[RMDB]
RNA sequence: GGGAACGACUCGAGUAGAGUCGAAAAGUCCAAGUCUCGCAGUAUUGCAUUCCUCUGUACGUUAGCUAUCAUGGUUAACAGCCUAGCGACCGAGCCUUUGCAGCGUGCUUCGGGUUCCCUGAUCAGGAAAUGGUAAAUUCUUCGGAAUUUACCAUUUAAAAGAAACAACAACAACAAC
Reactivity to 2A3 in 0.01 (KOAc 150mM, MgCl2 10mM, bicine 150mM(pH8.5), 24C), signal-to-noise 9, nucleotides 027 to 126: g050u010c010c010a020a020g050u010c020u010c080g020c030a030g050u130a110u140u180g020c030a040u060u040c020c000u020c020u040g040u070a120c030g010u030u030a010g010c010u030a050u280c070a150u220g120g040u140u080a080a050c020a040g000c000c020u020a010g010c000g010a020c010c020g020a010g030c000c040u070u050u070g030c030a030g010c010g040u030g010c010u030u040c060g030g000g000u020u020c000c000c000u030g050a110u110c050a020g090g040
Reactivity to DMS in 0.01 (KOAc 150mM, MgCl2 10mM, bicine 150mM(pH8.5), 24C), signal-to-noise 9, nucleotides 027 to 126: g000u020c010c020a060a070g010u010c040u000c030g030c030a110g010u020a100u030u010g020c030a080u010u000c140c010u000c040u000g010u010a080c060g010u000u000a030g010c020u000a070u020c150a130u030g000g010u010u010a070a070c100a090g010c140c030u000a040g010c040g010a070c040c070g000a050g010c110c060u000u010u000g020c040a050g010c060g020u010g010c030u000u000c090g010g010g000u000u000c000c000c000u010g010a100u010c100a100g010g010